This 177-nucleotide RNA was probed chemically with DMS and 2A3.
The data come from the RNA Mapping Database (RMDB), library M2PK50.
Reactivities are rounded to 0.1 and cut off at 0 and 3.
The reactions ran in a buffer of 150 mM KOAc, 10 mM MgCl2 and 150 mM bicine (pH 8.5), at 24 C.
The DMS profile rests on 1,217 reads.
For 2A3 the reverse transcriptase was SuperScript II with manganese.
For 2A3, 2,536 sequencing reads were counted.
RNA sequence: GGGAACGACUCGAGUAGAGUCGAAAAGUACGAUUUUUCGAAAUCGUACGAAGGUCAGGUCGCAGCACCACGACACUGGUCGCGGCGACCGAGCCGAACAGAAUAUGUGUAAUUUCGAUUACACAAACGCGUCGUAAAUAUUCGUAUUUACGACGCGAAAAGAAACAACAACAACAAC
Reactivity to DMS in 0.01 (KOAc 150mM, MgCl2 10mM, bicine 150mM(pH8.5), 24C), signal-to-noise 2, nucleotides 027 to 126: g000u000a000c000g020a010u000u000u010u000u010c190g000a010a020a000u000c000g000u000a000c010g000a050a110g010g010u000c020a200g010g000u000c000g020c030a050g040c040a040c030c010a000c160g000a150c300a160c300u000g000g000u000c100g050c010g020g010c000g000a010c000c010g000a200g000c020c000g000a080a070c160a100g000a150a050u000a070u000g020u000g000u000a000a020u000u010u000c190g010a030u000u000a000c000a000c010a020a030a160
Reactivity to 2A3 in 0.01 (KOAc 150mM, MgCl2 10mM, bicine 150mM(pH8.5), 24C), signal-to-noise 2, nucleotides 027 to 126: g000u010a000c000g000a000u010u000u010u050u200c160g070a000a010a000u010c000g010u000a000c020g000a050a010g020g000u060c060a020g000g000u000c040g000c010a010g000c000a000c000c010a000c050g190a030c090a050c110u050g030g020u020c130g020c020g010g000c020g000a000c020c000g000a010g000c000c030g000a020a010c020a020g270a170a060u220a090u150g000u000g000u020a000a000u000u140u070c160g040a010u000u000a010c000a000c000a010a070a020